This 177-nucleotide RNA was probed chemically with 2A3. The reactions ran in a buffer of 150 mM KOAc, 10 mM MgCl2 and 150 mM bicine (pH 8.5), at 24 C.
RNA sequence: GGGAACGACUCGAGUAGAGUCGAAAAACGCUGCUAUACGUAGCAGCGAACUACAAUUCGGCCGUUCAUUGGGUCAUCUAGCUCGUGUUGGAAACAGUUAGCUGCCUAGUGAAGGGCAAUAUUGUAAUGACCGGACUAUGUUCGCAUAGUCCGGUCAAAAAGAAACAACAACAACAAC
Reactivity to 2A3 in 0.01 (KOAc 150mM, MgCl2 10mM, bicine 150mM(pH8.5), 24C), signal-to-noise 2, nucleotides 027 to 126: a040c000g000c000u000g000c000u070a050u020a090c300g110u000a000g000c000a010g000c030g000a050a010c030u020a010c010a010a010u040u190c040g040g050c030c140g280u030u000c030a000u040u030g000g030g070u170c030a010u000c040u000a000g020c000u000c240g090u120g200u140u300g210g020a200a230a000c000a000g000u000u000a000g000c000u000g050c000c010u010a010g010u000g030a000a000g010g000g000c000a000a000u000a010u020u000g030u020a000a100